[RMDB]
RNA sequence: GGGAACGACUCGAGUAGAGUCGAAAAGACUUUAUCAACACGUGUUUUUAAUUUUUUCUCUUCAGCAGUAGGUUCAAUUAAAUCCCAAGGUUGACGCGCUGCAUGUUCAGCCAAUGCAAUAAUCGCGCAUUCGAUGCUGAUUCGUCAGCAUCGAAUGAAAAGAAACAACAACAACAAC
Reactivity to 2A3 in 0.01 (KOAc 150mM, MgCl2 10mM, bicine 150mM(pH8.5), 24C), signal-to-noise 1, nucleotides 027 to 126: g020a020c000u120u120u070a040u060c010a040a040c030a020c060g100u090g040u110u040u000u060u110a070a070u060u010u010u000u090u150c040u000c000u120u150c030a070g000c010a030g040u060a030g030g080u020u050c010a030a000u020u100a070a110a040u020c020c000c030a050a050g060g000u000u000g020a010c010g030c020g010c020u000g010c000a020u060g030u070u070c020a010g110c050c060a050a030u070g000c000a050a050u080a200a080u180c110g000c000g000
Reactivity to DMS in 0.01 (KOAc 150mM, MgCl2 10mM, bicine 150mM(pH8.5), 24C), signal-to-noise 2, nucleotides 027 to 126: g000a080c050u000u000u000a050u010c030a050a050c050a160c170g000u010g020u010u010u010u000u020a040a030u000u000u000u020u010u000c010u000c030u000u000c080a060g030c040a030g030u000a050g010g000u010u010c080a030a070u000u010a050a050a110u000c010c010c020a130a110g010g020u000u000g000a110c060g000c040g030c150u000g000c020a020u000g020u000u000c090a030g010c040c110a060a070u000g010c010a050a090u000a070a060u010c120g000c050g020
Structure probing data (2A3 and DMS) for a 177-nucleotide construct. 2A3 adducts were read by reverse transcription with SuperScript II with manganese.